[RMDB]
RNA sequence: GGGAACGACUCGAGUAGAGUCGAAAAUUUAAGAGCGUAGAUGUCUCUGUCACGAUACGUGUAAGUGACUCUCGUGUACUACUGACGAAUGAGACAGAGACAUUUAUGCUCAGUGUCAGUCAAGGAAGAUUACAAUUCUGUUCGCAGAAUUGUAAUCAAAAGAAACAACAACAACAAC
Reactivity to DMS in 0.01 (KOAc 150mM, MgCl2 10mM, bicine 150mM(pH8.5), 24C), signal-to-noise 5, nucleotides 027 to 126: u000u010u010a090a140g010a020g010c000g030u000a010g010a010u000g000u000c000u000c000u000g000u000c000a100c060g010a110u010a060c020g010u010g020u010a030a040g010u000g000a030c010u000c270u010c220g000u000g010u000a050c020u000a020c030u000g010a040c000g000a110a070u000g010a100g010a020c010a020g000a020g000a010c010a000u000u000u000a010u000g010c000u000c000a020g010u000g010u010c070a100g000u000c100a070a110g010g010a110a120
Reactivity to 2A3 in 0.01 (KOAc 150mM, MgCl2 10mM, bicine 150mM(pH8.5), 24C), signal-to-noise 6, nucleotides 027 to 126: u120u130u080a180a030g000a000g000c010g000u000a010g000a020u010g010u000c000u000c000u010g000u000c010a010c120g110a040u100a120c030g000u020g030u110a100a070g010u010g100a040c000u020c020u040c130g230u200g010u120a040c020u010a000c010u030g080a020c010g040a080a050u130g010a040g000a060c000a000g000a000g000a000c000a000u000u000u000a000u000g000c000u000c000a000g000u000g040u020c060a040g030u040c050a050a060g080g040a090a110
Source: RMDB library M2PK90, as collected in RNAgym. An RNA of 177 nucleotides, treated with DMS and 2A3 and read out base by base. 2A3 adducts were read by reverse transcription with SuperScript II with manganese. The 2A3 profile rests on 13,477 reads.